[RMDB]
RNA sequence: GGGAACGACUCGAGUAGAGUCGAAAAAAGAUAUGGAUCCUGAAACAGCUUGGAUUUAUAGGUACAGUACCUCGGAAACGAGGUACCGAGGCCUAUUGUCAGCUGGAGUACGGGAUCCUAAGUCAAAUCAUUCUUGUUUCUUCGGAAACAAGAAUGAAAAAGAAACAACAACAACAAC
Reactivity to 2A3 in 0.01 (KOAc 150mM, MgCl2 10mM, bicine 150mM(pH8.5), 24C), signal-to-noise 1, nucleotides 027 to 126: a000a000g050a020u020a030u110g030g000a010u010c010c050u060g020a010a020a030c010a000g030c030u180u250g150g000a040u060u300u040a020u050a050g000g020u030a000c010a010g000u010a000c000c000u030c020g010g040a100a120a090c010g000a010g010g000u000a000c000c000g010a040g030g000c020c000u000a000u000u000g030u000c020a010g000c000u010g020g000a020g000u030a050c150g000g010g000a000u000c000c000u010a110a020g060u000c050a050a030a160
Reactivity to DMS in 0.01 (KOAc 150mM, MgCl2 10mM, bicine 150mM(pH8.5), 24C), signal-to-noise 3, nucleotides 027 to 126: a080a110g010a030u030a300u000g000g010a000u000c000c000u010g020a280a210a240c010a010g000c000u000u020g030g000a040u000u000u000a010u000a000g010g010u010a010c000a030g010u000a010c000c000u000c000g000g020a120a090a180c010g000a000g010g010u000a010c000c000g030a300g000g000c010c000u000a000u010u000g020u010c010a050g020c000u000g000g010a060g000u000a120c260g000g010g000a010u000c000c000u010a000a100g020u010c040a120a170a140